[RMDB]
RNA sequence: GGGAACGACUCGAGUAGAGUCGAAAAGAUAUGGAAUGUGGUGAGCUUGGACCAUACUGGGUCGGAAACGACCUUAUGCUAGCUCUCACAUUCCUAAGUCAAACUGCCAUCCUUCGGGAUGGCAGAACUAUAGUGGCAGGUUCGCCUGCCACUAUAGAAAAGAAACAACAACAACAAC
Reactivity to 2A3 in 0.01 (KOAc 150mM, MgCl2 10mM, bicine 150mM(pH8.5), 24C), signal-to-noise 2, nucleotides 027 to 126: g010a000u010a000u040g000g010a020a000u010g010u020g030g280u230g040a020g000c070u300u300g090g000a020c000c000a000u020a020c110u060g040g020g000u020c000g000g020a000a000a000c000g000a000c020c000u000u010a000u000g000c000u000a000g000c000u010c020u000c000a000c010a000u010u010c000c000u000a010a000g000u010c030a060a090a130c010u000g010c010c000a010u010c010c020u080u180c300g170g000g000a000u000g010g000c000a000g010a010a000
Reactivity to DMS in 0.01 (KOAc 150mM, MgCl2 10mM, bicine 150mM(pH8.5), 24C), signal-to-noise 3, nucleotides 027 to 126: g010a010u000a020u010g000g000a010a010u000g000u010g020g030u010g000a000g030c010u000u000g020g020a020c300c000a000u000a000c300u030g000g000g010u000c000g000g000a010a000a050c000g030a010c000c000u000u000a000u000g020c000u010a020g010c000u000c010u010c010a010c010a010u010u010c010c000u000a000a040g000u000c010a090a120a210c000u000g000c000c000a010u000c000c000u000u020c300g010g000g000a000u000g000g000c000a000g010a010a070